[RMDB]
This 177-nucleotide RNA was probed chemically with 2A3 and DMS. The reactions ran in a buffer of 150 mM KOAc, 10 mM MgCl2 and 150 mM bicine (pH 8.5), at 24 C. For DMS, 7,527 sequencing reads were counted. The data come from the RNA Mapping Database (RMDB), library OK1LIB. Reactivities are given for positions 27 through 126. For DMS the reverse transcriptase was MarathonRT.
RNA sequence: GGGAACGACUCGAGUAGAGUCGAAAAGAGAGAAAUACCGCGAGAAAACCUAGAAAGGACGGACCGGACGCGGAAGCAGGUGCGUCACCGGUCGCAAGAAAGAGCGUAACAAGACGCACAGAGAGAGCAUAUCGUGAUGCUUCGGCAUCACGAUAUGAAAAGAAACAACAACAACAAC
Reactivity to 2A3 in 0.01 (KOAc 150mM, MgCl2 10mM, bicine 150mM(pH8.5), 24C), signal-to-noise 3, nucleotides 027 to 126: g090a000g030a010g040a010a110a030u140a070c020c010g010c010g010a030g050a030a080a020a020c030c030u060a030g120a160a200a040g050g030a030c080g030g000a010c000c000g010g010a020c010g000c030g010g040a060a000g050c030a000g070g130u020g020c000g020u010c050a010c030c020g020g000u020c020g000c080a050a070g130a160a060a000g110a030g050c030g010u020a050a010c000a040a010g030a000c000g030c040a000c030a000g090a000g030a000g000a020g010
Reactivity to DMS in 0.01 (KOAc 150mM, MgCl2 10mM, bicine 150mM(pH8.5), 24C), signal-to-noise 5, nucleotides 027 to 126: g030a130g020a070g030a080a120a070u040a130c040c010g010c010g000a210g000a080a060a060a100c010c020u010a140g010a100a090a040g000g010a090c140g010g030a070c030c030g000g000a200c040g000c020g000g000a120a060g020c070a100g010g010u000g000c000g020u010c020a080c090c050g000g000u000c010g020c040a070a090g020a100a110a070g000a070g000c000g000u020a030a070c140a100a070g010a000c000g020c000a000c010a130g000a100g000a090g000a090g000